[RMDB]
RNA sequence: GGGAACGACUCGAGUAGAGUCGAAAAAGCGUAGCGGUACGCCGCUACGCAAGGCGCAUUUGAACUGUAUUGUACGCCUUGCAUAAAGCAAAAGUACUAAAAAAACGUGCGGUUACGACGGCACGAAAAAACAUCCAUUGGUUCGCCAAUGGAUGAACCAGUCUUUGACGUUCGCGUCAAAGACUGGAAAAGAAACAACAACAACAAC
Reactivity to 2A3 in 0.01 (KOAc 150mM, MgCl2 10mM, bicine 150mM(pH8.5), 24C), signal-to-noise 2, nucleotides 027 to 156: a000g030c000g000u000a000g000c000g010g000u030a020c150g050c070c030g000c000u000a000c000g000c000a000a000g000g000c040g000c040a110u040u110u190g180a150a080c160u080g030u210a190u150u060g010u010a030c010g010c000c000u000u000g000c020a050u110a240a120a020g020c010a050a040a000a000g050u040a040c100u140a000a000a000a000a000a080a160c020g000u000g000c030g040g000u050u030a130c160g000a000c020g140g020c030a000c010g220a070a000a000a000a000a010c000a000u000c000c000a030u020u000g000g010u080u050c150g040c070c000a000a000u000g000g010a000u000g000a000a000

This 207-nucleotide RNA was probed chemically with 2A3.
The data come from the RNA Mapping Database (RMDB), library M2RFPK.